The record gives the reactivity of an RNA of 177 nucleotides to 2A3 and DMS.
RNA sequence: GGGAACGACUCGAGUAGAGUCGAAAAGAUAUGGAUCCGCUGGGACAUGACGAUGGGUCGGAAACGACCCUACCGUCAACAGCCCAGUCGGAUCCUAAGUCAAAACUCUGGGCUUCGGCCCAGAGAACAGUAUGAUAGCGUUCGCGCUAUCAUACUGAAAAGAAACAACAACAACAAC
Reactivity to 2A3 in 0.01 (KOAc 150mM, MgCl2 10mM, bicine 150mM(pH8.5), 24C), signal-to-noise 3, nucleotides 027 to 126: g010a000u020a010u070g010g000a010u000c010c010g000c000u000g020g020g000a080c250a300u300g000a000c050g030a000u000g000g000g020u000c010g000g000a040a020a000c000g000a010c000c010c000u010a010c010c000g000u010c010a020a060c090a040g030c000c000c000a000g010u050c020g000g000a000u010c000c000u000a000a000g000u000c010a040a010a050a250c010u000c000u000g000g000g000c010u090u100c300g220g020c000c020c000a000g000a000g000a010a000
Reactivity to DMS in 0.01 (KOAc 150mM, MgCl2 10mM, bicine 150mM(pH8.5), 24C), signal-to-noise 4, nucleotides 027 to 126: g010a020u000a150u000g000g010a000u000c000c000g030c000u000g000g020g010a040c120a210u010g010a010c010g010a120u000g000g020g030u010c000g020g010a020a020a060c000g010a010c000c000c000u000a000c090c000g010u000c000a070a090c280a130g000c000c000c000a010g000u010c030g030g010a000u000c000c000u010a010a070g000u010c000a170a120a150a170c010u000c000u000g000g000g000c000u010u000c260g040g010c000c010c000a000g000a000g000a030a110
It was measured as part of the RMDB library TTRDES.
Reactivities are given for positions 27 through 126.
For DMS the reverse transcriptase was MarathonRT.